[RMDB]
RNA sequence: GGGAACGACUCGAGUAGAGUCGAAAACUUUGGUGAGCCCCUAUCUAGUAUAGCAAUCCACCAAGCAGGUGAUUUCACACAAUUCAGGUUCUCAUAGAAAAUGCGCCCUGACUUGACAGGUAUGGUCGGUCAUUAUACGGUUCGCCGUAUAAUGACCAAAAGAAACAACAACAACAAC
Reactivity to DMS in 0.01 (KOAc 150mM, MgCl2 10mM, bicine 150mM(pH8.5), 24C), signal-to-noise 2, nucleotides 027 to 126: c030u010u000u010g000g020u010g000a110g030c020c300c300c030u030a020u020c020u020a080g030u060a000u000a030g000c240a130a110u060c080c020a040c000c020a010a080g020c200a040g010g020u000g020a110u010u020u000c040a060c060a080c050a030a160u000u030c010a010g000g000u080u000c020u000c010a060u000a130g000a100a110a080a080u010g000c090g010c300c010c000u040g000a020c040u010u000g000a030c020a010g010g020u000a040u030g000g000u000c060
Reactivity to 2A3 in 0.01 (KOAc 150mM, MgCl2 10mM, bicine 150mM(pH8.5), 24C), signal-to-noise 3, nucleotides 027 to 126: c000u000u010u110g050g000u030g000a060g040c000c000c000c000u020a040u030c010u010a060g110u070a040u020a060g050c060a030a100u010c020c010a000c010c000a020a020g060c050a050g010g090u040g060a120u020u110u140c060a070c000a000c000a090a040u050u010c000a020g030g010u060u030c010u040c010a060u080a040g140a070a130a000a050u040g030c030g060c010c000c000u000g010a040c020u050u080g050a030c010a030g030g110u090a110u090g050g020u120c090